An RNA of 177 nucleotides, treated with DMS and 2A3 and read out base by base. The reactions ran in a buffer of 150 mM KOAc, 10 mM MgCl2 and 150 mM bicine (pH 8.5), at 24 C. For 2A3, 8,929 sequencing reads were counted. It was measured as part of the RMDB library OK1LIB.
RNA sequence: GGGAACGACUCGAGUAGAGUCGAAAAAUGCCGUAACUUAGUUUUAGACCUAGAUAUCUACACACGUGUAUGUAUGAGAGUUGAAUGGCGAAAGAUCGUUUCCACUAGCGGGGAUCUUCGCGCUAGCAGUAAUCACCCUAUUCGUAGGGUGAUUACUAAAAGAAACAACAACAACAAC
Reactivity to DMS in 0.01 (KOAc 150mM, MgCl2 10mM, bicine 150mM(pH8.5), 24C), signal-to-noise 6, nucleotides 027 to 126: a070u020g000c020c010g020u010a050a060c050u030u010a120g010u010u010u020u020a100g000a090c050c020u020a080g000a050u000a030u000c060u010a020c020a040c030a120c300g010u020g000u020a020u000g000u020a010u020g030a070g010a090g000u010u010g020a060a080u040g000g020c000g000a090a070a060g010a090u020c020g000u010u000u020c010c030a290c050u000a020g020c030g000g000g010g000a110u030c180u010u020c030g010c000g010c010u010a010g010c260
Reactivity to 2A3 in 0.01 (KOAc 150mM, MgCl2 10mM, bicine 150mM(pH8.5), 24C), signal-to-noise 9, nucleotides 027 to 126: a000u120g030c020c020g050u040a050a050c050u090u110a060g130u130u120u060u140a050g040a030c010c010u030a040g030a140u050a050u060c030u040a010c020a010c010a020c090g060u030g030u120a050u100g070u010a060u080g130a100g020a020g080u050u110g150a140a090u130g040g010c030g000a050a020a000g040a050u020c020g030u020u030u020c000c000a020c020u020a020g020c030g050g140g010g030a120u090c070u130u140c150g090c000g010c050u010a000g010c010